[RMDB]
RNA sequence: GGGAACGACUCGAGUAGAGUCGAAAAGAGAGCUACCCUUCCCUGCCUCCAGUGCCAUGUGUCCGGGCCAUGUGAGCAGAGCUUUGUGGGCCUGAGGUGGCUCUGGGGCUUCAGGGCUCUGCUGUAACCGCUGAAAUGACUUCGGUCAUUUCAGCGGAAAAGAAACAACAACAACAAC
Reactivity to 2A3 in 0.01 (KOAc 150mM, MgCl2 10mM, bicine 150mM(pH8.5), 24C), signal-to-noise 2, nucleotides 027 to 126: g060a020g030a010g010c050u210a160c020c000c000u000u040c010c000c000u020g030c010c000u060c000c050a020g000u000g020c010c010a030u070g150u020g170u130c030c020g000g040g070c010c010a060u080g140u090g090a000g020c080a110g030a040g100c020u030u040u030g050u090g050g120g080c020c000u080g020a110g010g070u000g000g000c000u020c010u030g010g000g000g060c000u010u010c070a000g010g000g050c000u010c000u030g060c020u040g060u190a060a070
Background: Chemical mapping of a 177-nucleotide RNA with 2A3. The reactions ran in a buffer of 150 mM KOAc, 10 mM MgCl2 and 150 mM bicine (pH 8.5), at 24 C. The data come from the RNA Mapping Database (RMDB), library RFM100. For 2A3, 831 sequencing reads were counted. Values cover nucleotides 27 to 126. For 2A3 the reverse transcriptase was SuperScript II with manganese.